[RMDB]
RNA sequence: GGGAACGACUCGAGUAGAGUCGAAAAAGGUUAAUCAAAGAGGGUAAUAAUCCCGUAGACAAAAUAGCGCUUAUACCUAGCAGUAUCCUGAGUAGGGCUGGACACGCGAAAUCCAGUUUGAAUCCGGGAGGACCAUCUCCCAACCCUAAAUACUCCUCAGACCAUUAAGGUUCGCCUUAAUGGUCUGAAAAGAAACAACAACAACAAC
Reactivity to 2A3 in 0.01 (KOAc 150mM, MgCl2 10mM, bicine 150mM(pH8.5), 24C), signal-to-noise 2, nucleotides 027 to 156: a000g050g000u030u030a000a050u120c080a040a130a040g060a050g100g040g020u120a230a160u050a030a070u300c000c000c000g030u080a060g000a020c070a000a120a060a180u070a050g050c030g000c050u090u070a070u030a050c030c020u000a010g040c000a010g040u050a030u010c010c020u020g010a020g110u090a010g030g000g030c000u020g000g010a040c030a010c110g130c020g010a010a000a000u010c040c000a010g010u000u050u050g040a030a050u130c160c070g000g060g000a010g020g020a010c040c020a090u080c030u010c080c000c000a010a020c020c000c000u010a080a080a000u090a150c010u010c000c050u000